Chemical mapping of a 177-nucleotide RNA with DMS. Conditions: 150 mM KOAc, 10 mM MgCl2 and 150 mM bicine (pH 8.5), 24 C. It was measured as part of the RMDB library TTRDES.
RNA sequence: GGGAACGACUCGAGUAGAGUCGAAAAAAGAUAUGGAUCAUAUGAAAUCCUCAUAUUGUCAGCUCGUUCGGUCGGAAACGACCGUUCGAGCUUGGAUUUAUAUGAGAACUGUAUGAUCCUAAGUCAACUAAUUUUUUCAGUUCGCUGAAAAAAUUAGAAAAGAAACAACAACAACAAC
Reactivity to DMS in 0.01 (KOAc 150mM, MgCl2 10mM, bicine 150mM(pH8.5), 24C), signal-to-noise 1, nucleotides 027 to 126: a070a100g000a030u000a300u000g000g000a010u000c000a020u030a010u000g000a150a140a170u000c050c000u010c000a010u010a010u000u010g000u010c010a030g010c000u000c000g020u000u010c000g040g000u000c000g020g010a130a150a160c010g020a000c000c000g010u010u000c000g020a010g020c000u000u000g000g000a010u000u010u010a000u000a000u010g010a040g000a030a030c110u050g000u020a000u000g000a010u000c000c010u000a020a060g030u010c070a120a250